[RMDB]
An RNA of 170 nucleotides, treated with 2A3 and DMS and read out base by base. It was measured as part of the RMDB library 15KLIB. Reactivities are given for positions 27 through 129. The reactions ran in a buffer of 150 mM KOAc, 10 mM MgCl2 and 150 mM bicine (pH 8.5), at 24 C. 2A3 adducts were read by reverse transcription with SuperScript II with manganese.

RNA sequence: GGGAACGACUCGAGUAGAGUCGAAAAAUGAUGUGAGUGCAUUCCGUGAUCUGAAACCUUUACCAUUCUUUUAUUAUUCUACUACACCAUGUGAAGUGCAUGGUAAUGGUAGUAUGAUAGAGGAUAUCAAUCCUGCGCUUCGGCGCAGGAAAAAGAAACAACAACAACAAC
Reactivity to 2A3 in 0.01 (KOAc 150mM, MgCl2 10mM, bicine 150mM(pH8.5), 24C), signal-to-noise 2, nucleotides 027 to 129: a000u010g050a000u040g010u010g030a030g040u010g010c030a000u090u000c030c060g050u080g000a040u010c010u030g000a040a030a040c000c000u130u110u100a090c080c000a020u110u040c000u030u010u000u000a010u030u000a010u110u010c000u000a060c010u000a000c000a000c010c010a030u000g010u000g300a300a060g110u040g160c000a000u010g030g000u010a000a000u070g000g000u000a010g000u000a020u000g010a010u010a000g000a000g000g000a000u020a030u040c050a040a010
Reactivity to DMS in 0.01 (KOAc 150mM, MgCl2 10mM, bicine 150mM(pH8.5), 24C), signal-to-noise 1, nucleotides 027 to 129: a000u030g020a060u000g030u030g060a080g060u000g040c030a240u110u010c030c110g030u070g000a050u050c020u000g030a080a110a030c180c060u000u010u130a130c230c100a210u010u010c010u000u000u000u000a040u020u000a010u000u020c020u040a020c020u000a060c300a030c000c010a090u080g000u050g060a210a130g080u080g030c020a030u040g020g000u100a000a100u120g040g000u030a020g000u030a050u060g000a090u040a020g000a000g010g000a030u010a090u030c270a050a050